Notes:
Chemical mapping of a 177-nucleotide RNA with 2A3 and DMS.
[RMDB]
RNA sequence: GGGAACGACUCGAGUAGAGUCGAAAAGAUAUGGAUUCCAGGGAGCUACGGAUCGGAAACGAUCCAGUAGCAUCGAUCUGGACUGUCCUAAGUCAAAGUAUAAUGGCACUUCGGUGCCAUUAUACAAGCCUUACUACCAGUUCGCUGGUAGUAAGGCAAAAGAAACAACAACAACAAC
Reactivity to 2A3 in 0.01 (KOAc 150mM, MgCl2 10mM, bicine 150mM(pH8.5), 24C), signal-to-noise 1, nucleotides 027 to 126: g010a000u010a000u050g000g000a000u030u000c010c000a000g000g000g010a020g020c000u000a010c020g010g000a010u000c000g000g000a000a000a000c000g000a010u000c010c010a010g000u000a000g000c000a020u170c010g000a020u000c010u010g050g050a060c200u230g030u020c010c000u000a000a000g010u000c060a250a030a000g000u010a020u000a000a000u000g010g000c000a010c020u070u060c300g100g010u000g010c000c010a000u000u000a000u000a000c000a000a000
Reactivity to DMS in 0.01 (KOAc 150mM, MgCl2 10mM, bicine 150mM(pH8.5), 24C), signal-to-noise 2, nucleotides 027 to 126: g000a010u000a010u020g000g000a040u000u000c010c000a000g010g020g010a000g040c000u000a000c000g010g000a020u000c020g050g000a000a010a020c000g020a000u000c000c020a020g010u000a010g020c000a160u010c180g000a100u000c010u010g000g000a010c300u010g010u000c000c000u010a000a110g010u000c000a110a050a150g020u000a010u000a000a030u000g000g000c000a000c000u010u000c190g040g000u000g010c000c000a010u000u000a000u000a000c010a120a110
About this RNA: For 2A3 the reverse transcriptase was SuperScript II with manganese. It was measured as part of the RMDB library TTRDEL. High DMS reactivity at an A or C suggests that its Watson-Crick edge is free. For DMS, 1,532 sequencing reads were counted. Reactivities are given for positions 27 through 126.